The record gives the reactivity of an RNA of 177 nucleotides to 2A3 and DMS.
[RMDB]
RNA sequence: GGGAACGACUCGAGUAGAGUCGAAAAAUGUUAAAAACUGAAGUUCGCAUUCCUGCAGAACUGGUGGAUUCGAUGCAGAAUGCGCAUCGUCAACUCAACUGCAUGACUAAGGUGAUGAGCAUAAAAAGCCUUUUAGUCCAUUCGUGGACUAAAAGGCAAAAGAAACAACAACAACAAC
Reactivity to 2A3 in 0.01 (KOAc 150mM, MgCl2 10mM, bicine 150mM(pH8.5), 24C), signal-to-noise 2, nucleotides 027 to 126: a000u070g000u060u010a240a000a000a000a000c020u030g010a090a000g080u070u150c020g010c010a020u000u050c000c000u000g000c010a030g010a110a030c120u030g000g090u110g070g110a300u040u040c010g020a000u000g000c000a000g080a250a200u080g100c000g000c000a000u030c010g090u000c040a050a000c000u000c070a000a160c030u100g010c000a140u160g000a060c000u000a000a050g050g010u000g040a080u070g060a100g060c030a020u180a070a080a000a010a000
Reactivity to DMS in 0.01 (KOAc 150mM, MgCl2 10mM, bicine 150mM(pH8.5), 24C), signal-to-noise 2, nucleotides 027 to 126: a050u040g000u000u050a100a010a110a240a040c100u000g040a160a040g020u010u000c110g000c080a080u000u000c170c020u030g000c000a050g030a060a060c000u010g020g100u000g000g000a160u000u040c010g030a010u010g050c040a180g000a130a020u030g020c170g020c050a000u000c040g000u000c050a030a050c050u040c040a050a110c030u030g000c050a100u080g000a020c160u010a090a100g000g020u000g000a250u060g010a100g000c020a000u000a090a180a090a080a110